[RMDB]
RNA sequence: GGGAACGACUCGAGUAGAGUCGAAAACACUGCGAAUAGGAGAUCCAGAGGGUAUCGAGGCUAAUUUCGACCAGAAUAUAUGGCCCGCCCGAUGGUCGAGGUUGCAAUCUAAUAUUAAUGCCUUGUAUACUCAUGCACGAUUCGUCGUGCAUGAGUAAAAAGAAACAACAACAACAAC
Reactivity to 2A3 in 0.01 (KOAc 150mM, MgCl2 10mM, bicine 150mM(pH8.5), 24C), signal-to-noise 1, nucleotides 027 to 126: c020a000c060u100g040c030g020a050a030u070a170g000g150a070g020a060u110c000c000a000g020a040g070g060g000u070a060u270c030g030a090g000g000c010u010a010a070u050u000u010c070g080a160c050c090a070g060a090a000u190a010u030a090u260g020g000c010c030c010g000c000c020c030g000a030u000g030g000u000c000g000a000g020g040u070u040g030c040a030a050u010c100u190a070a100u130a150u250u130a080a030u060g000c000c000u060u010g080u050a080
Reactivity to DMS in 0.01 (KOAc 150mM, MgCl2 10mM, bicine 150mM(pH8.5), 24C), signal-to-noise 2, nucleotides 027 to 126: c060a080c100u010g000c060g040a080a030u000a120g000g020a160g010a070u000c000c030a030g000a300g010g000g020u000a040u010c050g020a140g010g030c000u020a030a120u010u010u000c010g000a080c140c190a130g010a050a060u000a100u000a090u010g030g000c020c010c020g010c040c030c000g000a130u000g010g000u000c050g010a060g000g030u000u000g010c160a050a100u010c150u000a080a040u010a070u010u000a060a110u010g000c010c010u000u010g030u010a140